[RMDB]
RNA sequence: GGGAACGACUCGAGUAGAGUCGAAAACGUAGUGGUACAUGGAUGGUAAAAACGUCAAGGAUAGGGUUGAUCCGCAGGGAAGCGCGAGGGCCAACCUGCCUUUGGGCAACAGUUGGCAAAGGCGAACCUUCAGAGACUCUAAUGGAGUGGGCGCAAGCACCAGUUAGGCGUUCGCGCCUAACUGGUGAAAAGAAACAACAACAACAAC
Reactivity to 2A3 in 0.01 (KOAc 150mM, MgCl2 10mM, bicine 150mM(pH8.5), 24C), signal-to-noise 1, nucleotides 027 to 156: c030g030u050a030g070u030g030g030u100a090c030a060u030g000g060a030u030g010g040u130a060a050a000a120a030c040g030u010c080a070a020g030g010a010u020a080g030g000g020u000u070g030a090u000c010c030g030c070a030g000g010g070a090a010g010c020g000c010g070a190g020g050g000c020c000a000a010c030c010u000g010c010c000u050u060u200g230g000g000c030a050a050c040a110g000u020u020g010g000c030a020a050a000g050g000c010g010a040a040c000c000u020u040c010a010g000a000g020a030c000u020c050u110a120a050u100g030g000a030g010u050g000g020g040c030g010c060a050a020g040